[RMDB]
RNA sequence: GGGAACGACUCGAGUAGAGUCGAAAAAGGGUCGGUCAAGUUUACAGAUACAUUAAAUACACUUACUAUUAGCUGUUUGGUGAAUUUCUUCCUUUCAGUGCUGGUAAGUGCUUUCUAACUUGGAAGAAUGUACCAUUUAAACGCCAGAAAGUAUGGACGUAGCGGACCAUUUCGAUGGUCCGCUACGAAAAGAAACAACAACAACAAC
Reactivity to 2A3 in 0.01 (KOAc 150mM, MgCl2 10mM, bicine 150mM(pH8.5), 24C), signal-to-noise 2, nucleotides 027 to 156: a010g060g010g000u010c010g000g050u060c030a020a020g020u040u050u070a140c030a020g060a050u030a020c040a060u010u190a000a190a090u170a040c010a000c010u000u050a000c000u040a010u200u190a040g030c020u020g020u010u010u040g080g020u180g070a170a160u140u030u070c010u080u050c000c000u010u020u020c030a000g000u040g110c040u020g070g010u010a060a000g000u020g000c000u000u100u000c030u060a190a300c070u010u060g010g000a000a000g030a040a010u000g010u030a030c000c000a030u000u090u090a070a090a020c040g060c040c000a030g120a050a080a010g070u030a030u090g010g020a010